[RMDB]
Structure probing data (DMS and 2A3) for a 177-nucleotide construct. DMS (dimethyl sulfate) methylates the pairing face of unpaired adenines and cytosines. Values cover nucleotides 27 to 126. For DMS the reverse transcriptase was MarathonRT. The DMS profile rests on 3,487 reads. The RNA was probed in 150 mM KOAc, 10 mM MgCl2 and 150 mM bicine (pH 8.5) at 24 C. Source: RMDB library OK2TST, as collected in RNAgym.
RNA sequence: GGGAACGACUCGAGUAGAGUCGAAAAACUUCGCCUGAAUGGCUGCGAAAUGCCACCUCCUUCGACCCCGAAAACGGAGCUACUGGAGCAACGCACCAAGGAGCUGCGCGGUAUUCGUACCCAGCUACAUAUGCCUGCAUUUCGAUGCAGGCAUAUGAAAAGAAACAACAACAACAAC
Reactivity to DMS in 0.01 (KOAc 150mM, MgCl2 10mM, bicine 150mM(pH8.5), 24C), signal-to-noise 4, nucleotides 027 to 126: a120c120u010u000c080g010c040c030u000g010a160a090u000g000g010c070u000g020c090g010a040a130a100u010g010c020c010a130c130c010u000c030c010u000u000c080g010a160c050c040c040c020g000a050a050a080a080c100g010g000a100g010c020u000a050c090u000g010g010a090g010c030a110a060c110g030c140a070c030c030a070a110g020g010a060g010c050u000g010c070g010c050g010g010u000a080u000u010c090g010u000a080c030c010c020a090g010c080u000a160
Reactivity to 2A3 in 0.01 (KOAc 150mM, MgCl2 10mM, bicine 150mM(pH8.5), 24C), signal-to-noise 2, nucleotides 027 to 126: a000c020u070u090c040g010c020c010u060g140a200a080u140g020g030c040u020g030c050g030a060a070a060u070g000c000c000a040c010c000u020c000c000u030u030c060g120a200c000c000c000c040g060a100a030a030a030c100g010g020a030g000c030u070a070c020u060g000g030a080g000c030a090a140c060g000c030a040c050c010a030a100g070g000a020g040c020u060g010c090g030c020g020g030u060a120u070u040c040g000u010a030c010c010c000a010g000c010u040a050